[RMDB]
RNA sequence: GGGAACGACUCGAGUAGAGUCGAAAACAACAGGGAGGUUGGUGGUGGACGAGCCACUCGCCAACCGGGUCAGGUCCGGAAGGAAGCAGCCCUAACGAGCCAGGCACGGGUCGCCGUGCGAGUACAAGAGUGAGCCUAGAUUCGUCUAGGCUCACUCAAAAGAAACAACAACAACAAC
Reactivity to DMS in 0.01 (KOAc 150mM, MgCl2 10mM, bicine 150mM(pH8.5), 24C), signal-to-noise 2, nucleotides 027 to 126: c080a100a180c170a050g000g000g000a080g000g010u000u000g000g040u000g000g050u000g030g000a180c300g000a100g000c010c010a020c020u020c020g000c010c010a000a040c000c000g000g010g000u040c010a300g000g000u000c010c000g010g020a110a150g000g000a030a020g000c000a270g000c010c010c000u000a140a090c100g000a100g000c070c000a190g000g000c010a010c000g000g000g010u030c300g010c050c010g020u000g000c030g010a110g030u010a070c220a050a160